Source: RMDB library OK2TST, as collected in RNAgym. This 177-nucleotide RNA was probed chemically with DMS. Values cover nucleotides 27 to 126. The reactions ran in a buffer of 150 mM KOAc, 10 mM MgCl2 and 150 mM bicine (pH 8.5), at 24 C.
[RMDB]
RNA sequence: GGGAACGACUCGAGUAGAGUCGAAAAAAACUGCUGGACUUUGAGGUCAACUUCUCGGACUAUCCGAAAGGCAAUCAUAACGAGUUCCUGACCAUCGUGACAUUGUCCACACAUCCGCCGCAGAUCAUGCUCAAAAUUACUUCGGUAAUUUUGAGCAAAAAGAAACAACAACAACAAC
Reactivity to DMS in 0.01 (KOAc 150mM, MgCl2 10mM, bicine 150mM(pH8.5), 24C), signal-to-noise 1, nucleotides 027 to 126: a170a090a060c050u030g000c060u000g020g000a010c040u000u000u000g020a110g000g020u000c000a100a040c100u000u030c060u000c000g020g000a170c120u000a130u000c000c000g000a030a080a220g090g000c130a050a170u000c060a050u000a160a030c040g010a110g020u000u000c100c060u000g000a040c110c020a160u040c300g000u020g000a160c050a060u000u010g000u000c010c020a000c180a070c180a110u000c060c030g000c040c040g040c070a000g020a080u010c180a070